[RMDB]
RNA sequence: GGGAACGACUCGAGUAGAGUCGAAAAAAAAGAUAUGGAUCGAGCUGCUCGACGAUCGUACGAAUGACCGUGGUCGGAAACGACCACCAGUAAGACUACGGGAGAGCUGCUCGAUCCUAAGUCAAAAGGUAUCUAUGUUCUUCGGAACAUAGAUACCAAAAGAAACAACAACAACAAC
Reactivity to 2A3 in 0.01 (KOAc 150mM, MgCl2 10mM, bicine 150mM(pH8.5), 24C), signal-to-noise 2, nucleotides 027 to 126: a000a010a010a060g020a000u030a010u030g000g000a000u010c000g020a000g010c000u030g000c020u090c030g300a300c000g000a160u000c010g010u000a000c080g110a300a130u050g040a010c020c010g000u010g000g000u010c020g000g000a000a000a000c000g010a000c000c000a000c000c000a000g010u010a000a000g000a010c010u000a000c000g000g000g000a020g000a010g010c000u000g010c000u000c000g010a000u000c000c000u000a000a010g000u010c000a030a030a040a110
Reactivity to DMS in 0.01 (KOAc 150mM, MgCl2 10mM, bicine 150mM(pH8.5), 24C), signal-to-noise 3, nucleotides 027 to 126: a110a060a080a050g010a020u000a040u020g010g000a000u000c000g000a010g000c000u000g020c010u010c010g000a110c250g010a020u000c000g000u000a010c240g020a080a190u000g010a080c300c300g000u000g000g010u000c000g000g020a040a020a010c000g000a020c000c010a010c020c010a030g030u000a000a020g000a300c300u000a010c000g000g000g020a020g010a010g010c000u000g000c000u000c000g000a000u000c000c000u000a000a030g000u000c000a080a080a080a140
An RNA of 177 nucleotides, treated with 2A3 and DMS and read out base by base. The 2A3 profile rests on 4,471 reads. Values are in units of 0.01, from 0 to 300, in steps of 10.